Structure probing data (DMS and 2A3) for a 177-nucleotide construct.
Conditions: 150 mM KOAc, 10 mM MgCl2 and 150 mM bicine (pH 8.5), 24 C.
For DMS, 11,584 sequencing reads were counted.
[RMDB]
RNA sequence: GGGAACGACUCGAGUAGAGUCGAAAAGGCUCGAAGUUCGCUUCGAGCCAAAUAAAUUCAGCGGUAAUUCCUCCGCAAAAAUUACCGCUGAUGCGGAGGAAAAAACAACCGUGUUCGCACGGUUGAACGUAAUAUGUAUGUUCGCAUACAUAUUACGAAAAGAAACAACAACAACAAC
Reactivity to DMS in 0.01 (KOAc 150mM, MgCl2 10mM, bicine 150mM(pH8.5), 24C), signal-to-noise 6, nucleotides 027 to 126: g010g010c000u000c000g020a010a010g010u000u020c230g020c010u000u000c000g010a010g020c000c000a010a010a030u000a050a080a110u000u000c030a020g010c010g010g010u000a060a070u000u000c050c040u010c060c130g020c130a020a040a040a050a020u000u000a040c020c020g010c020u000g010a030u000g000c110g000g000a070g000g010a000a050a040a060a080a100c010a010a000c000c000g020u000g010u000u010c190g010c010a010c000g000g000u000u000g000a060a100
Reactivity to 2A3 in 0.01 (KOAc 150mM, MgCl2 10mM, bicine 150mM(pH8.5), 24C), signal-to-noise 3, nucleotides 027 to 126: g010g000c010u010c000g000a010a010g010u050u090c150g050c120u010u000c000g000a000g000c000c000a000a000a000u000a000a010a020u080u040c020a010g020c010g030g030u040a060a100u060u000c010c020u020c030c040g000c010a060a060a000a030a050u050u040a030c010c000g000c010u010g010a010u040g010c020g000g030a060g000g000a080a040a010a010a020a010c010a000a000c000c000g000u000g030u020u040c240g020c050a000c000g010g000u000u010g010a030a000
Record summary
The 2A3 profile rests on 18,693 reads. DMS adducts were read by reverse transcription with MarathonRT. Values cover nucleotides 27 to 126.